[RMDB]
RNA sequence: GGGAACGACUCGAGUAGAGUCGAAAAGCGCUAUUUGCUCGCUAGUAGUGAGUGGCCAACUUCCUUUCCAGCUUUGGAAGCGAACUCUCCUCCUCCACACGCUGUGUUGUGCCGCAUGCACAUGGGGUCUUAGCUACACUUUCGAGUGUAGCUAAGAAAAAGAAACAACAACAACAAC
Reactivity to DMS in 0.01 (KOAc 150mM, MgCl2 10mM, bicine 150mM(pH8.5), 24C), signal-to-noise 7, nucleotides 027 to 126: g010c140g020c010u000a020u000u010u000g010c020u000c030g020c220u010a110g020u010a040g030u000g010a030g020u000g000g010c020c030a090a090c150u010u000c030c020u000u000u010c030c030a090g010c150u010u010u000g000g010a060a050g000c090g010a060a090c090u010c040u000c040c010u000c010c010u000c010c020a070c110a060c110g010c060u010g020u000g010u010u000g020u000g020c020c100g010c090a070u000g020c050a030c060a070u000g010g000g000g000
Reactivity to 2A3 in 0.01 (KOAc 150mM, MgCl2 10mM, bicine 150mM(pH8.5), 24C), signal-to-noise 3, nucleotides 027 to 126: g060c030g010c050u020a030u040u070u070g000c010u030c040g150c140u130a040g050u030a020g020u170g060a020g020u040g030g000c000c030a040a060c040u020u010c000c000u020u080u010c040c050a070g050c070u130u230u150g040g030a050a050g040c060g060a060a040c030u010c010u000c100c000u000c020c010u000c070c010a040c000a010c040g070c040u080g020u020g030u180u040g030u070g010c030c010g100c050a060u110g000c020a040c020a050u050g000g070g020g000
Chemical mapping of a 177-nucleotide RNA with DMS and 2A3. DMS adducts were read by reverse transcription with MarathonRT. Values cover nucleotides 27 to 126.